[RMDB]
RNA sequence: GGGAACGACUCGAGUAGAGUCGAAAAGUCAUUAACGCGUGUGCACUCUCUAACACGAAUUACCCAGUUAUUUACGACUUUACUCGAGUCGUUAUAGCGUGAUAUGAGAGAGUAAUCCGCGACCAAAUUACUAACACAUGUUCGCAUGUGUUAGUAAAAAAGAAACAACAACAACAAC
Reactivity to 2A3 in 0.01 (KOAc 150mM, MgCl2 10mM, bicine 150mM(pH8.5), 24C), signal-to-noise 2, nucleotides 027 to 126: g030u020c070a110u110u140a080a020c050g030c010g100u020g000u020g050c020a030c090u000c000u000c040u050a020a000c010a010c000g010a040a100u120u060a080c010c000c000a030g030u030u030a060u080u050u030a070c010g000a000c010u000u000u010a020c000u000c020g000a010g000u000c000g000u010u000a010u000a000g020c000g020u130g030a000u010a030u140g020a040g000a030g000a000g010u010a040a060u000c010c000g000c010g010a010c000c010a010a070a040
Reactivity to DMS in 0.01 (KOAc 150mM, MgCl2 10mM, bicine 150mM(pH8.5), 24C), signal-to-noise 5, nucleotides 027 to 126: g020u010c170a110u010u010a030a040c060g010c010g020u000g010u000g000c150a050c010u000c000u010c010u010a150a040c000a000c000g010a170a090u000u010a110c070c080c060a120g000u000u000a030u000u000u000a120c010g000a010c000u000u000u000a000c010u000c010g010a010g000u000c000g010u000u000a010u000a100g000c010g010u010g020a030u000a090u000g000a060g000a070g010a060g020u000a120a090u000c010c000g000c000g010a170c050c040a050a060a110